[RMDB]
RNA sequence: GGGAACGACUCGAGUAGAGUCGAAAACUGGGGAUGUAGUGCAGGUGAUAAGGGAGGCUGCUUACCUAACGUGUAUGUAAAUGAAGCUCUGGAACCUUCAACAUCACAUUAUAAAAGGGUAAGGUGGCUUACGGUAAGCAUUCGUGCUUACCGUAAGAAAAGAAACAACAACAACAAC
Reactivity to DMS in 0.01 (KOAc 150mM, MgCl2 10mM, bicine 150mM(pH8.5), 24C), signal-to-noise 6, nucleotides 027 to 126: c090u010g020g010g000g010a100u010g010u010a070g030u010g020c060a080g010g020u000g010a120u010a080a100g000g010g000a120g000g040c020u010g010c010u000u000a030c020c000u000a070a090c180g010u000g030u010a000u000g000u020a040a040a300u000g010a020a020g010c080u010c100u010g020g030a110a060c300c000u000u000c030a030a040c020a010u000c030a010c010a070u000u010a130u010a040a070a090a140g010g000g000u000a030a030g010g010u000g010g000
Reactivity to 2A3 in 0.01 (KOAc 150mM, MgCl2 10mM, bicine 150mM(pH8.5), 24C), signal-to-noise 4, nucleotides 027 to 126: c030u010g010g000g000g010a030u090g050u220a060g050u050g100c070a040g020g070u070g060a090u050a190a080g010g030g000a030g050g020c020u030g020c000u020u020a030c000c010u030a090a030c090g010u010g030u030a030u010g030u020a080a060a000u060g000a010a000g000c020u060c110u200g100g060a070a060c010c020u010u020c000a030a010c000a010u020c010a000c010a020u100u210a140u120a090a070a020a010g040g010g010u020a030a030g040g060u050g090g020
Structure probing data (DMS and 2A3) for a 177-nucleotide construct. Reactivities are rounded to 0.1 and cut off at 0 and 3. The data come from the RNA Mapping Database (RMDB), library OK2TRN.